[RMDB]
RNA sequence: GGGAACGACUCGAGUAGAGUCGAAAAAACGUUGCAUGAUCGUAAAACAUGCCCGGCUUACCGUGAGCCGCCUUUGAAAGAAAGGUUUACGCGGACUCUGUUGCGUUACGCACGUACCUAACUUGUGAAAACGGCAUCUUGUUCGCAAGAUGCCGAAGCAUUUAACUCACUUCGGUGAGUUAAAUGCAAAAGAAACAACAACAACAAC
Reactivity to 2A3 in 0.01 (KOAc 150mM, MgCl2 10mM, bicine 150mM(pH8.5), 24C), signal-to-noise 3, nucleotides 027 to 156: a000a000c000g000u000u000g010c000a000u000g020a090u200c030g060u190a090a110a000a030c000a000u010g030c000c000c010g000g000c000u020u080a120c000c010g010u000g020a000g000c000c000g020c040c010u040u010u010g070a090a060a000g030a000a010a000g040g000u010u020u050a010c010g000c010g080g040a160c050u070c050u150g110u090u090g020c040g050u070u020a070c210g020c020a010c010g030u030a030c000c020u090a120a140c070u140u150g030u050g170a020a070a060a040c010g000g000c000a000u000c000u010u010g030u000u040c140g020c080a000a000g000a000u000g000c000c000g000a000a000

The record gives the reactivity of an RNA of 207 nucleotides to 2A3. The RNA was probed in 150 mM KOAc, 10 mM MgCl2 and 150 mM bicine (pH 8.5) at 24 C. For 2A3, 1,995 sequencing reads were counted.